[RMDB]
RNA sequence: GGGAACGACUCGAGUAGAGUCGAAAAGAUAUGGAUCCGUAAGUUCAACAGCCACCGGUCGGAAACGACCGCGUGGACAUGAAUAUCGGAUCCUAAGUCAAAAGGAAGGUGGUUCGCCACCUUCCAAGACAAUUUACUCGUUCGCGAGUAAAUUGUCAAAAGAAACAACAACAACAAC
Reactivity to 2A3 in 0.01 (KOAc 150mM, MgCl2 10mM, bicine 150mM(pH8.5), 24C), signal-to-noise 2, nucleotides 027 to 126: g000a020u010a000u060g000g000a010u010c000c010g020u060a300a300g110u150u050c150a300a250c120a300g020c030c010a000c000c000g000g010u020c000g000g000a000a040a010c000g000a000c010c000g000c060g020u010g000g000a010c000a200u190g000a000a000u020a030u020c010g000g000a000u000c000c020u010a000a000g010u000c010a110a070a050a050g000g010a000a000g000g000u030g000g090u090u200c270g110c040c000a000c000c000u000u000c010c000a000a010
Reactivity to DMS in 0.01 (KOAc 150mM, MgCl2 10mM, bicine 150mM(pH8.5), 24C), signal-to-noise 2, nucleotides 027 to 126: g020a020u000a010u010g000g010a010u000c000c000g010u000a130a270g010u000u010c020a150a180c170a220g010c000c000a000c000c010g000g030u010c020g030g010a000a000a050c000g010a010c000c000g000c290g000u000g000g000a010c080a100u020g010a000a010u000a160u010c000g000g020a010u000c000c000u000a000a070g010u010c000a070a100a120a150g000g030a000a000g010g040u000g020g020u000u030c230g000c000c000a010c010c000u000u020c000c000a070a050
Conditions: 150 mM KOAc, 10 mM MgCl2 and 150 mM bicine (pH 8.5), 24 C. This 177-nucleotide RNA was probed chemically with 2A3 and DMS. For 2A3 the reverse transcriptase was SuperScript II with manganese. Values cover nucleotides 27 to 126. The 2A3 profile rests on 3,588 reads.